Overview: The data come from the RNA Mapping Database (RMDB), library 15KLIB. Chemical mapping of a 170-nucleotide RNA with DMS and 2A3. For 2A3, 34,893 sequencing reads were counted. The reactions ran in a buffer of 150 mM KOAc, 10 mM MgCl2 and 150 mM bicine (pH 8.5), at 24 C.
[RMDB]
RNA sequence: GGGAACGACUCGAGUAGAGUCGAAAACAACUGUUAUCUUGCCACUGCAUUGUUAACACUCCAACAAAUAGAGUAGAAGUUUAAUCCACCUGCUCUACAAAGGGCUGGUGAAGCUGCUAACUUUUGUAUAACACUUCGUUCGCGAAGUGUAAAAGAAACAACAACAACAAC
Reactivity to DMS in 0.01 (KOAc 150mM, MgCl2 10mM, bicine 150mM(pH8.5), 24C), signal-to-noise 7, nucleotides 027 to 129: c100a100a070c170u040g000u040u010a060u050c070u010u050g040c050c210a150c210u110g020c030a000u000u000g000u030u030a000a070c000a050c010u030c000c060a060a050c010a030a130a070u070a010g030a120g020u010a080g010a070a040g020u000u000u000a110a130u050c070c030a000c030c030u030g020c000u040c000u030a040c300a070a080a050g000g000g000c050u000g020g020u010g030a050a000g020c020u000g020c030u000a070a080c040u030u010u020u000g030u010a110u010a060
Reactivity to 2A3 in 0.01 (KOAc 150mM, MgCl2 10mM, bicine 150mM(pH8.5), 24C), signal-to-noise 9, nucleotides 027 to 129: c020a010a020c070u030g020u050u030a070u070c040u040u050g030c040c070a200c140u180g000c020a040u070u070g030u050u040a030a010c020a030c060u010c040c030a030a020c020a050a100a070u230a050g050a010g040u020a000g010a070a000g030u050u080u210a080a070u040c030c000a010c010c010u020g000c000u000c000u040a080c060a020a180a070g000g020g000c000u020g000g010u000g000a030a000g010c020u040g010c010u010a050a090c000u030u010u040u050g080u040a090u050a130